[RMDB]
RNA sequence: GGGAACGACUCGAGUAGAGUCGAAAAGAAUUCACGCAAUUAAAGAUAAUCUAGGGCCAGGCACCUAUAAUCCCAGCACUUUGGGAAGCAGAGGCAGGAAGAUUGCCUGAGCCCAGGAUUUUGAGACCAGUCUGGGCAACAUGGCAAGACCCCGUCUCGUUUAACUGUAGUUCGCUACAGUUAAACGAAAAGAAACAACAACAACAAC
Reactivity to 2A3 in 0.01 (KOAc 150mM, MgCl2 10mM, bicine 150mM(pH8.5), 24C), signal-to-noise 2, nucleotides 027 to 156: g060a010a100u080u050c030a050c080g020c040a040a050u090u100a260a120a070g090a080u190a100a040u080c070u080a050g000g000g040c020c030a060g030g040c030a040c050c020u070a080u070a120a050u060c000c000c020a030g040c040a050c130u170u250u070g030g000g000a050a000g060c050a000g000a030g030g000c030a020g010g020a010a070g060a170u000u050g000c000c000u000g000a010g000c020c000c000a000g010g020a040u080u170u140u210g170a110g020a030c030c000a010g040u040c000u000g000g000g000c000a060a000c040a070u180g000g000c020a010a000g030a050c000c000c000c010g050u050c020u000
An RNA of 207 nucleotides, treated with 2A3 and read out base by base.
The RNA was probed in 150 mM KOAc, 10 mM MgCl2 and 150 mM bicine (pH 8.5) at 24 C.
High 2A3 reactivity points to a flexible backbone, as in loops and unpaired stretches.
Reactivities are given for positions 27 through 156.
2A3 adducts were read by reverse transcription with SuperScript II with manganese.
Values are in units of 0.01, from 0 to 300, in steps of 10.